[RMDB]
RNA sequence: GGGAACGACUCGAGUAGAGUCGAAAAUUAGCCCCUGGUCUGUGUGCAUAUCUAUCCAGCAAGGAGCUGAGCUCCUCUCCACAGAGAUGCUGUGCAAAUAUAAGGGUUGGAGGCUCUCUCAGCUGACAGGCAGACCUAGAUUGUGAAGCUGGGAUUAUACUAUAUCGGUGUUCGCACCGAUAUAGUAAAAAGAAACAACAACAACAAC
Reactivity to 2A3 in 0.01 (KOAc 150mM, MgCl2 10mM, bicine 150mM(pH8.5), 24C), signal-to-noise 2, nucleotides 027 to 156: u050u000a040g060c000c000c000c020u000g000g000u020c010u010g010u040g070u080g050c070a120u160a080u250c040u110a050u080c060c000a000g000c000a090a060g080g060a000g040c070u050g020a000g000c050u010c010c010u000c000u020c000c000a030c020a010g040a020g000a130u140g150c020u010g000u010g050c030a010a140a000u170a060u130a250a140g080g010g020u140u110g020g000a030g030g000c000u010c000u000c010u000c040a000g000c000u000g030a050c000a010g040g040c000a000g010a000c000c000u040a090g070a190u100u140g030u090g100a100a010g010c000u050g000g060g000a010u140u110a080
Reactivity to DMS in 0.01 (KOAc 150mM, MgCl2 10mM, bicine 150mM(pH8.5), 24C), signal-to-noise 2, nucleotides 027 to 156: u000u000a210g010c020c000c030c120u000g000g020u000c020u000g000u000g000u000g040c000a120u000a090u010c070u000a060u010c000c010a040g040c030a210a080g030g030a020g000c020u000g030a130g020c050u000c010c010u000c010u010c030c030a060c070a060g030a170g000a110u010g010c040u010g030u000g030c040a060a090a110u010a190u000a100a100g010g030g040u000u000g020g010a160g000g000c060u000c080u000c030u000c020a070g000c010u040g020a100c060a090g000g020c010a050g000a080c030c030u010a070g020a140u000u000g030u000g000a150a170g020c010u000g000g010g020a140u010u010a190